[RMDB]
RNA sequence: GGGAACGACUCGAGUAGAGUCGAAAACGACUCUAUACGUCCCCGUCGUACAGAAUGGUAACAUAUCUCUCCAAAUAUCUGAGCUUGGGUAUACGGGGAAACCCAACCCCUUGGGAAGAUUGGGUAUAAAAGGAGCGAUCCUUCGGGAUCGCUCCAACUGGUUCAAUUAGUUCGCUAAUUGAACCAGAAAAGAAACAACAACAACAAC
Reactivity to 2A3 in 0.01 (KOAc 150mM, MgCl2 10mM, bicine 150mM(pH8.5), 24C), signal-to-noise 1, nucleotides 027 to 156: c020g000a000c000u020c000u000a000u020a070c000g020u020c000c000c000c040g150u130c040g010u040a090c100a100g070a100a090u130g080g060u210a270a030c030a090u190a260u130c010u000c000u000c060c000a060a030a190u160a110u070c040u060g000a020g090c010u000u000g000g000g010u030a010u000a030c000g030g040g000g030a050a020a020c000c000c010a010a030c010c010c000c020u030u020g040g000g000a000a010g010a020u010u030g030g000g070u050a050u020a140a130a040a110g010g000a020g000c000g000a000u020c020c000u040u020c150g040g020g010a020u000c000g020c010u010c000c000a000a010
Record summary
The record gives the reactivity of an RNA of 207 nucleotides to 2A3. Source: RMDB library M2RFPK, as collected in RNAgym. Conditions: 150 mM KOAc, 10 mM MgCl2 and 150 mM bicine (pH 8.5), 24 C. Values cover nucleotides 27 to 156. 2A3 adducts were read by reverse transcription with SuperScript II with manganese.